[RMDB]
RNA sequence: GGGAACGACUCGAGUAGAGUCGAAAAGAUUGACAUAUGUAAUUAUGUCAUGAACGUGGAAUUCCUAGUAGUUGGUAGUCACUAACGACUAACGAAUGAGUCCCUGUUCUUUGUACACACCGCCCGUUCCAAUGAGGGGCUUCGGCCCCUCAUUGGAAAAAGAAACAACAACAACAAC
Reactivity to 2A3 in 0.01 (KOAc 150mM, MgCl2 10mM, bicine 150mM(pH8.5), 24C), signal-to-noise 1, nucleotides 027 to 126: g110a050u000u280g000a000c000a000u050a010u140g010u190a000a070u090u000a020u000g000u020c000a000u060g020a000a000c130g020u120g020g050a010a080u020u000c000c000u000a060g000u000a030g000u000u000g140g020u050a000g080u010c080a000c160u110a050a120c130g000a000c030u040a080a080c030g030a070a060u140g030a010g000u000c010c010c010u000g080u030u000c030u030u040u090g000u000a020c130a030c000a000c070c000g080c000c000c000g070u050

Structure probing data (2A3) for a 177-nucleotide construct. For 2A3 the reverse transcriptase was SuperScript II with manganese. It was measured as part of the RMDB library RFM100.